The record gives the reactivity of an RNA of 177 nucleotides to DMS. The data come from the RNA Mapping Database (RMDB), library OK2TRN.
RNA sequence: GGGAACGACUCGAGUAGAGUCGAAAAUUUUAACGGUUGGAGAACAAGUGUACCUUAUGACGAAGUCUGGCGUGAAGUUUUUGUUGUGUAGGAACCAAGACACUGAGUUUUUUAUCCCGGCUAAGGAUACGAGGCAAUAAUUCGUUAUUGCCUCGUAAAAAGAAACAACAACAACAAC
Reactivity to DMS in 0.01 (KOAc 150mM, MgCl2 10mM, bicine 150mM(pH8.5), 24C), signal-to-noise 3, nucleotides 027 to 126: u010u020u010u000a070a150c090g010g020u000u000g000g010a070g000a050a050c030a140a080g020u000g010u000a070c040c030u000u010a080u000g020a040c040g010a080a070g000u000c030u010g010g010c090g010u000g020a090a070g010u010u010u010u000u020g010u000u000g000u000g000u000a080g020g010a090a070c100c090a050a140g000a050c030a030c050u000g000a090g000u010u000u010u010u000u010a110u020c040c010c040g010g020c160u010a050a090g010g010a220
For DMS, 2,826 sequencing reads were counted. The RNA was probed in 150 mM KOAc, 10 mM MgCl2 and 150 mM bicine (pH 8.5) at 24 C.